Chemical mapping of a 177-nucleotide RNA with DMS and 2A3. High 2A3 reactivity points to a flexible backbone, as in loops and unpaired stretches. The RNA was probed in 150 mM KOAc, 10 mM MgCl2 and 150 mM bicine (pH 8.5) at 24 C. The data come from the RNA Mapping Database (RMDB), library OK2TRN. 2A3 adducts were read by reverse transcription with SuperScript II with manganese.
[RMDB]
RNA sequence: GGGAACGACUCGAGUAGAGUCGAAAAGCUCAGUGAAUUUGAGCGAGAUAACUUCAACAAGCUGCCGCGCAAGAUGCCGAUUCAGAUGGCCAACGGGGACGAGUCCACGCCCACUGUUCCGGCGGGACAGCGAAAUGAGUUUCGACUCAUUUCGCUGAAAAGAAACAACAACAACAAC
Reactivity to DMS in 0.01 (KOAc 150mM, MgCl2 10mM, bicine 150mM(pH8.5), 24C), signal-to-noise 2, nucleotides 027 to 126: g000c020u000c010a010g010u010g030a140a170u010u020u010g000a030g000c000g000a130g020a120u010a060a030c070u010u000c060a120a070c190a130a130g030c000u020g020c030c010g030c050g010c070a080a100g020a100u020g020c040c010g010a130u000u000c040a040g010a130u010g010g020c040c010a090a040c050g000g000g030g000a050c070g010a130g000u010c010c030a010c120g000c050c000c010a070c120u000g010u000u000c020c020g000g010c070g020g000g000a130
Reactivity to 2A3 in 0.01 (KOAc 150mM, MgCl2 10mM, bicine 150mM(pH8.5), 24C), signal-to-noise 1, nucleotides 027 to 126: g010c010u010c010a030g000u060g300a180a120u110u120u080g010a000g000c030g030a000g000a030u180a080a070c040u080u070c070a070a050c030a080a060g000c010u050g000c000c050g060c030g020c040a060a060g060a110u120g030c010c010g020a000u040u050c030a040g140a200u080g050g000c040c040a030a020c040g000g040g050g000a020c100g070a040g030u060c020c010a050c040g000c020c030c000a030c020u010g010u060u000c030c010g010g000c070g000g020g020a020